An RNA of 177 nucleotides, treated with 2A3 and DMS and read out base by base. The reactions ran in a buffer of 150 mM KOAc, 10 mM MgCl2 and 150 mM bicine (pH 8.5), at 24 C. Source: RMDB library RFM100, as collected in RNAgym. High 2A3 reactivity points to a flexible backbone, as in loops and unpaired stretches. The 2A3 profile rests on 486 reads.
RNA sequence: GGGAACGACUCGAGUAGAGUCGAAAAAGAAGGGCAAAGAGAGAUGCGAGGUCUCACAGUGCGAUGAUGGAGGAGCCGAUGGGGAACAUAGUAUACCAGGGCGAGAGAUGAAAUGCCAAGACCCCUGUUUGAUGACUCGAUUCGUCGAGUCAUCAAAAAAAGAAACAACAACAACAAC
Reactivity to 2A3 in 0.01 (KOAc 150mM, MgCl2 10mM, bicine 150mM(pH8.5), 24C), signal-to-noise 1, nucleotides 027 to 126: a010g140a040a050g090g000g010c080a000a100a000g050a000g000a000g040a070u050g050c080g020a010g060g030u000c000u010c040a080c000a020g140u050g150c000g020a000u000g060a020u000g000g000a060g040g020a000g030c050c000g110a270u090g020g020g000g010a000a000c000a020u170a010g130u180a010u090a080c080c020a000g000g000g000c000g000a130g000a000g000a000u140g040a180a250a000u140g010c000c070a000a010g000a020c000c000c000c000u000g050
Reactivity to DMS in 0.01 (KOAc 150mM, MgCl2 10mM, bicine 150mM(pH8.5), 24C), signal-to-noise 3, nucleotides 027 to 126: a110g010a050a050g050g030g000c020a040a100a110g000a110g010a120g030a100u040g010c080g000a090g010g010u000c020u020c030a110c050a050g020u030g020c050g000a080u030g000a080u000g000g000a030g000g000a130g050c090c070g000a120u010g000g010g010g060a080a100c170a080u000a090g000u010a080u010a160c070c070a040g010g000g030c100g000a030g000a060g000a120u010g000a110a060a040u010g010c000c040a040a150g000a170c070c000c000c040u020g000